[RMDB]
RNA sequence: GGGAACGACUCGAGUAGAGUCGAAAAAAAAGAUAUGGAACGAUGAAGCCUUGGAUUUAUGGGUUGUAGUACAUCGGAAACGAUGUAUGAGAACCCAUUGUCAGGCUACAUCGUUCCUAAGUCAAAACGUAAAGAUAUGGUUCGCCAUAUCUUUACGAAAAGAAACAACAACAACAAC
Reactivity to 2A3 in 0.01 (KOAc 150mM, MgCl2 10mM, bicine 150mM(pH8.5), 24C), signal-to-noise 3, nucleotides 027 to 126: a000a000a000a000g060a020u100a030u160g000g000a000a010c000g010a010u010g020a050a000g010c010c020u160u240g290g000a080u300u300u150a000u040g000g000g000u000u020g000u010a000g000u000a000c010a000u000c010g020g010a030a070a000c020g000a000u000g000u010a010u010g010a010g010a010a000c000c000c000a000u000u000g010u010c000a000g000g000c000u000a010c000a000u000c000g010u000u000c010c000u000a000a000g010u000c020a010a040a090a110
Reactivity to DMS in 0.01 (KOAc 150mM, MgCl2 10mM, bicine 150mM(pH8.5), 24C), signal-to-noise 7, nucleotides 027 to 126: a060a040a080a090g010a040u000a300u010g000g010a010a010c000g010a010u000g010a160a020g010c000c000u000u010g020g010a020u010u010u000a010u000g010g000g000u000u000g000u000a300g000u000a010c000a000u000c000g010g000a150a090a190c000g010a010u000g010u000a010u000g000a250g000a040a010c000c010c010a000u000u000g010u000c010a030g000g020c000u000a040c000a000u000c000g020u010u000c000c000u000a010a070g010u000c040a080a070a090a160
Chemical mapping of a 177-nucleotide RNA with 2A3 and DMS. Reactivities are given for positions 27 through 126. As a SHAPE reagent, 2A3 marks flexible, mostly unpaired nucleotides at the ribose 2'-OH. 2A3 adducts were read by reverse transcription with SuperScript II with manganese.